[RMDB]
RNA sequence: GGGAACGACUCGAGUAGAGUCGAAAAUACUCCUUGUGGGUGCAGGCGAACCAGGACUUUUACUUUGAAAAAAUUAGAGUGUUCAAAGCAGGCGAAAGCUCGAAUAUAUUAGCAUGGAAUAAUGGAAUAGGACGUUUGGUUCUAUUUUGUUGGUUUCCGAAUAAUGUACGUUCGCGUACAUUAUUCGAAAAGAAACAACAACAACAAC
Reactivity to 2A3 in 0.01 (KOAc 150mM, MgCl2 10mM, bicine 150mM(pH8.5), 24C), signal-to-noise 2, nucleotides 027 to 156: u100a020c040u060c010c020u020u140g110u050g040g000g020u090g060c060a040g010g000c050g010a020a030c020c020a020g070g040a040c020u190u160u070u070a060c010u000u180u130g060a100a050a000a010a000a040u130u300a040g030a010g060u100g010u040u030c030a010a090a040g010c020a010g090g020c030g050a110a000a010g010c020u040c080g000a060a010u120a030u000a080u100u150a040g000c030a030u020g030g030a020a040u080a050a050u090g020g020a010a010u000a030g040g030a000c020g090u100u160u080g050g000u040u050c040u040a110u000u050u020u030g000u010u000g080g000u000u030u020c010
The record gives the reactivity of an RNA of 207 nucleotides to 2A3. For 2A3 the reverse transcriptase was SuperScript II with manganese. It was measured as part of the RMDB library PDB130. The RNA was probed in 150 mM KOAc, 10 mM MgCl2 and 150 mM bicine (pH 8.5) at 24 C.